[RMDB]
RNA sequence: GGGAACGACUCGAGUAGAGUCGAAAAGAUAUGGAACAUUCGUUGCAGGCUGAUGACCAUUACUGAAUUUAUAUCGGAAACGAUAUAUUAGUCAGUAAUGCAAGGCCGCAACGAAUGUUCCUAAGUCCAAUUUAGUAUCGUUCGCGAUACUAAAUUGAAAAGAAACAACAACAACAAC
Reactivity to 2A3 in 0.01 (KOAc 150mM, MgCl2 10mM, bicine 150mM(pH8.5), 24C), signal-to-noise 4, nucleotides 027 to 126: g040a040u150a070u270g010g010a000a000c010a010u010u000c010g020u010u030g060c300a300g170g000c030u030g020a300u150g040a130c080c000a000u010u030a010c010u000g020a070a080u040u050u010a010u000a010u010c020g030g030a110a070a020c010g000a010u010a000u010a020u070u100a080g110u010c010a000g000u000a000a000u000g000c000a080a220g010g000c020c000g010c000a000a000c000g000a000a000u000g000u000u000c000c000u010a010a000g010u010c000
Reactivity to DMS in 0.01 (KOAc 150mM, MgCl2 10mM, bicine 150mM(pH8.5), 24C), signal-to-noise 6, nucleotides 027 to 126: g000a090u010a300u020g000g000a020a000c000a010u000u000c000g020u000u000g010c010a160g050g010c010u000g010a100u000g010a140c300c000a010u000u000a000c000u010g000a030a050u000u000u000a000u000a000u000c010g000g000a150a100a170c020g020a010u000a000u000a000u010u010a070g010u000c000a000g000u000a010a000u000g000c010a060a080g000g020c000c000g000c000a000a000c000g000a000a000u000g000u000u000c000c000u000a010a080g010u000c040